[RMDB]
RNA sequence: GGGAACGACUCGAGUAGAGUCGAAAAGAAAGUGUGCACCGUCUCAGCUUUUGUAUACGCAGGACUUUUUGCUGAGACUUUAGUCCUGCGUGCAUGACUUCGGUCAUGCAUACUGGUGCUCACGAAAGGGAACGGGGACCUUCGGGUUUCCGUUCCCAAAAGAAACAACAACAACAAC
Reactivity to DMS in 0.01 (KOAc 150mM, MgCl2 10mM, bicine 150mM(pH8.5), 24C), signal-to-noise 3, nucleotides 027 to 126: g040a120a060a140g010u000g010u000g010c000a000c000c000g010u000c000u000c000a020g020c000u020u030u040u030g010u030a040u020a060c050g000c010a010g000g000a010c000u000u010u010u010u000g010c000u000g000a010g020a090c080u020u030u020a050g010u000c000c000u000g010c010g040u000g000c010a000u010g000a010c010u010u050c240g000g020u000c000a000u000g000c010a020u020a000c130u000g000g010u000g000c000u010c000a010c000g000a060a100a140
Reactivity to 2A3 in 0.01 (KOAc 150mM, MgCl2 10mM, bicine 150mM(pH8.5), 24C), signal-to-noise 7, nucleotides 027 to 126: g100a020a060a020g010u010g010u020g000c000a000c000c010g050u010c000u010c000a010g000c010u110u150u170u200g110u060a090u010a040c030g000c000a000g000g000a010c010u110u110u030u150u130g000c000u010g000a000g010a030c000u070u060u030a000g000u000c000c000u000g000c000g000u000g000c000a000u000g000a000c000u020u040c160g050g000u000c000a000u000g000c000a010u040a030c060u040g000g000u000g000c000u000c000a000c000g040a070a010a000
The data come from the RNA Mapping Database (RMDB), library OK1LIB. Chemical mapping of a 177-nucleotide RNA with DMS and 2A3. The reactions ran in a buffer of 150 mM KOAc, 10 mM MgCl2 and 150 mM bicine (pH 8.5), at 24 C. Reactivities are rounded to 0.1 and cut off at 0 and 3. For 2A3, 11,400 sequencing reads were counted. 2A3 adducts were read by reverse transcription with SuperScript II with manganese.